[RMDB]
RNA sequence: GGGAACGACUCGAGUAGAGUCGAAAAAGUAGCUGCGUGCUAUCGCCGAUCCUAACCCCCGUUUCGUCUUGUACGAAUCACUCUUGAACGAACUUAAAAUUGCAUCAUACGUCACGGUAGGUUUCGUGACUACUGACCUGUUCGCAGGUCAGUAGUCAAAAGAAACAACAACAACAAC
Reactivity to 2A3 in 0.01 (KOAc 150mM, MgCl2 10mM, bicine 150mM(pH8.5), 24C), signal-to-noise 3, nucleotides 027 to 126: a010g130u090a000g000c010u060g080c100g070u070g060c020u030a050u080c010g000c030c060g050a100u030c000c000u070a090a120c020c000c010c000c020g040u000u000u050c020g020u000c000u060u230g090u100a030c000g040a060a040u040c020a050c120u050c010u040u100g050a070a010c040g000a040a050c020u060u070a070a090a100a140u060u110g000c030a030u050c000a010u270a130c050g080u000c020a040c040g140g000u020a030g050g000u030u030u040c000g000u000